This 177-nucleotide RNA was probed chemically with 2A3 and DMS. Reactivities are rounded to 0.1 and cut off at 0 and 3. For 2A3 the reverse transcriptase was SuperScript II with manganese. The DMS profile rests on 2,712 reads. Source: RMDB library OK2TRN, as collected in RNAgym. The reactions ran in a buffer of 150 mM KOAc, 10 mM MgCl2 and 150 mM bicine (pH 8.5), at 24 C.
RNA sequence: GGGAACGACUCGAGUAGAGUCGAAAAGGCCGUCAGCUUGGCCCAGCCACCGUUGGGCAAGCUGCGGGCGCUUGGUGUCAAUCCCGACGACGACAAGCCGUCGGGCAGCUCCGACGAAACGUUGGCCGUACCUUCCAAUUUUCGAAUUGGAAGGUACAAAAGAAACAACAACAACAAC
Reactivity to 2A3 in 0.01 (KOAc 150mM, MgCl2 10mM, bicine 150mM(pH8.5), 24C), signal-to-noise 2, nucleotides 027 to 126: g020g060c010c030g140u190c060a020g000c020u090u100g230g160c020c000c000a020g000c020c080a200c090c140g010u020u020g010g020g000c000a000a000g000c010u000g000c020g010g060g000c060g020c070u090u140g060g000u100g050u060c030a050a090u100c000c010c020g000a020c020g000a000c000g020a050c040a060a020g020c010c000g010u020c000g000g020g000c010a010g000c010u050c020c030g020a030c020g040a030a070a030c120g090u090u150g030g040c040c030
Reactivity to DMS in 0.01 (KOAc 150mM, MgCl2 10mM, bicine 150mM(pH8.5), 24C), signal-to-noise 3, nucleotides 027 to 126: g010g020c010c010g010u020c010a020g010c010u010u010g050g020c000c000c000a010g010c020c180a130c300c230g010u000u000g010g020g000c020a020a010g020c000u000g020c050g010g000g020c140g020c070u000u010g000g000u030g010u020c020a150a180u000c000c000c010g010a060c020g000a020c000g010a100c170a050a100g000c030c010g010u000c010g000g000g020c300a080g000c110u010c010c020g010a030c020g000a080a090a060c100g000u010u000g020g010c090c090